[RMDB]
RNA sequence: GGGAACGACUCGAGUAGAGUCGAAAACGCGGGAACCCUAGCCGACCUGCUGGGGGCGGAUCGUCCAUUGCUGCACAGCAGCUUCGGGCACCUCGAGGGCAUCCAGCAGCCGCUCAUAGACGAGCUGGUUGCGAAAUCUUUUCGAAGAUUUCGCAACAAAAGAAACAACAACAACAAC
Reactivity to 2A3 in 0.01 (KOAc 150mM, MgCl2 10mM, bicine 150mM(pH8.5), 24C), signal-to-noise 5, nucleotides 027 to 126: c070g010c020g010g030g020a130a150c010c000c010u000a000g050c010c010g140a150c010c010u050g000c020u020g000g000g000g020g000c020g020g020a070u130c080g020u000c010c020a040u050u080g020c030u010g030c030a110c040a300g010c000a000g000c000u020u060c040g020g000g030c040a060c010c020u030c040g050a190g020g030g020c000a050u010c010c000a010g000c000a000g020c030c020g020c000u020c010a120u190a080g120a050c070g000a000g000c030u060g090
Reactivity to DMS in 0.01 (KOAc 150mM, MgCl2 10mM, bicine 150mM(pH8.5), 24C), signal-to-noise 2, nucleotides 027 to 126: c090g020c040g030g000g000a140a170c040c010c000u000a110g010c000c100g010a070c300c030u020g030c000u000g010g000g010g040g040c080g000g000a060u040c070g000u050c020c000a010u030u020g000c000u000g000c010a090c160a160g000c010a000g030c000u000u000c080g010g010g030c020a130c040c040u010c050g010a110g000g010g070c030a030u000c040c020a080g000c020a090g020c040c030g050c010u010c000a090u050a060g030a180c060g000a030g040c010u000g000